[RMDB]
RNA sequence: GGGAACGACUCGAGUAGAGUCGAAAAAAGUGCCGGCUAAGUGUAAACGAUAAAGGAGGUCCCGGGUCGAAGACAGCGGGGAGGUAGGCUUAGAAGCAGCCACCCUUUAAAGAGUGCGUAACAGCUCGAAGUUAAUAUCGUUCGCGAUAUUAACUUCAAAAGAAACAACAACAACAAC
Reactivity to 2A3 in 0.01 (KOAc 150mM, MgCl2 10mM, bicine 150mM(pH8.5), 24C), signal-to-noise 1, nucleotides 027 to 126: a010a000g090u080g000c020c000g050g050c010u020a070a090g000u050g050u180a080a090a030c040g000a040u120a070a130a070g030g020a020g000g080u020c000c000c000g060g030g000u010c040g000a030a020g040a010c030a000g110c030g010g000g010g000a020g070g010u050a060g080g000c010u000u010a080g030a210a010g010c000a010g030c010c020a010c000c000c000u050u100u020a020a010a020g020a000g000u020g010c050g030u050a050a000c010a030g040c010u060c120
Reactivity to DMS in 0.01 (KOAc 150mM, MgCl2 10mM, bicine 150mM(pH8.5), 24C), signal-to-noise 3, nucleotides 027 to 126: a070a100g010u010g000c050c000g020g020c020u000a100a150g020u010g020u000a060a090a080c070g000a100u000a030a060a120g010g000a110g000g020u000c050c020c060g010g010g010u000c050g000a040a070g010a040c090a060g020c100g020g000g000g000a030g000g030u000a040g020g000c040u000u010a080g000a080a160g000c100a060g020c020c010a100c040c010c010u000u010u010a040a050a100g000a090g020u000g010c090g010u010a040a060c120a130g010c040u000c060
The record gives the reactivity of an RNA of 177 nucleotides to 2A3 and DMS.
The 2A3 profile rests on 1,446 reads.
The RNA was probed in 150 mM KOAc, 10 mM MgCl2 and 150 mM bicine (pH 8.5) at 24 C.
Values cover nucleotides 27 to 126.